[RMDB]
Source: RMDB library 15KLIB, as collected in RNAgym.
Structure probing data (DMS and 2A3) for a 170-nucleotide construct.
RNA sequence: GGGAACGACUCGAGUAGAGUCGAAAACGAGGGCCUUCCUUCUGCGGUGAUCCUCCCUCUCCUUGUCGGUGAACCCGCUCUUGUGAGGCCUCUUCAUAGGUCCGGAGUCGACCUCCAUCUGAUCUGUACGGCGUCUCGUUCGCGAGACGCAAAAGAAACAACAACAACAAC
Reactivity to DMS in 0.01 (KOAc 150mM, MgCl2 10mM, bicine 150mM(pH8.5), 24C), signal-to-noise 4, nucleotides 027 to 129: c140g030a100g040g020g040c090c020u020u020c050c030u020u030c050u040g050c110g040g040u040g000a160u000c000c000u010c020c030c010u030c040u020c000c000u040u030g000u010c080g020g040u040g000a040a040c000c000c020g000c050u020c080u020u040g030u030g020a070g030g020c040c030u020c040u030u020c080a000u080a070g060g000u080c000c000g030g020a000g010u020c080g020a070c110c020u030c030c050a090u040c120u050g040a080u040c060u040g000u060a100c150g030
Reactivity to 2A3 in 0.01 (KOAc 150mM, MgCl2 10mM, bicine 150mM(pH8.5), 24C), signal-to-noise 5, nucleotides 027 to 129: c050g020a060g020g030g030c000c000u040u060c050c000u050u110c040u040g030c030g050g020u060g050a090u060c000c000u010c000c010c000u060c010u040c000c040u030u130g120u100c060g020g020u030g010a040a040c000c000c010g030c010u010c040u050u140g040u040g020a010g020g000c000c010u040c020u080u050c040a110u070a070g000g050u030c030c000g020g010a000g040u020c010g020a080c000c000u040c030c000a090u060c070u060g020a040u030c020u060g050u080a040c060g050
Source information: The RNA was probed in 150 mM KOAc, 10 mM MgCl2 and 150 mM bicine (pH 8.5) at 24 C. For 2A3, 10,878 sequencing reads were counted.